Notes
The data come from the RNA Mapping Database (RMDB), library OK2TST. Chemical mapping of a 177-nucleotide RNA with DMS and 2A3. The DMS profile rests on 624 reads. For 2A3, 762 sequencing reads were counted. The reactions ran in a buffer of 150 mM KOAc, 10 mM MgCl2 and 150 mM bicine (pH 8.5), at 24 C. 2A3 adducts were read by reverse transcription with SuperScript II with manganese.
[RMDB]
RNA sequence: GGGAACGACUCGAGUAGAGUCGAAAACGUGCUGGAAAUAGCGCAUAUUUCUUUCAUCCUGACAAUCAGGAAGAUGCAGAAGCAAUCACUCAUCUUUUCACUGAUGUUCAAAAUCGAUAUACAUUCGCCAAGGGACGGGAUUCGUCCCGUCCCUUGGAAAAGAAACAACAACAACAAC
Reactivity to DMS in 0.01 (KOAc 150mM, MgCl2 10mM, bicine 150mM(pH8.5), 24C), signal-to-noise 1, nucleotides 027 to 126: c260g030u020g010c080u000g010g000a090a080a060u010a010g030c190g030c140a120u010a050u000u000u000c040u000u000u000c110a120u000c030c010u000g020a110c080a060a030u000c010a030g010g010a050a030g000a000u010g030c200a000g030a110a060g010c240a070a070u000c230a040c030u000c010a010u000c000u000u000u000u000c140a190c010u010g000a030u000g000u000u000c030a100a050a030a070u060c140g000a000u000a060u000a130c260a100u000u020c080g000
Reactivity to 2A3 in 0.01 (KOAc 150mM, MgCl2 10mM, bicine 150mM(pH8.5), 24C), signal-to-noise 1, nucleotides 027 to 126: c100g000u010g000c030u010g130g050a080a080a090u100a030g060c040g000c100a070u000a100u080u060u000c010u030u190u030c010a040u000c010c020u020g010a030c030a070a140u070c010a010g070g020a010a010g020a020u060g000c220a000g030a160a000g170c080a090a030u060c020a020c020u000c000a000u010c020u000u060u070u080c150a150c110u000g070a030u000g010u170u300c070a050a040a060a070u080c060g110a030u030a030u000a160c090a000u000u000c000g020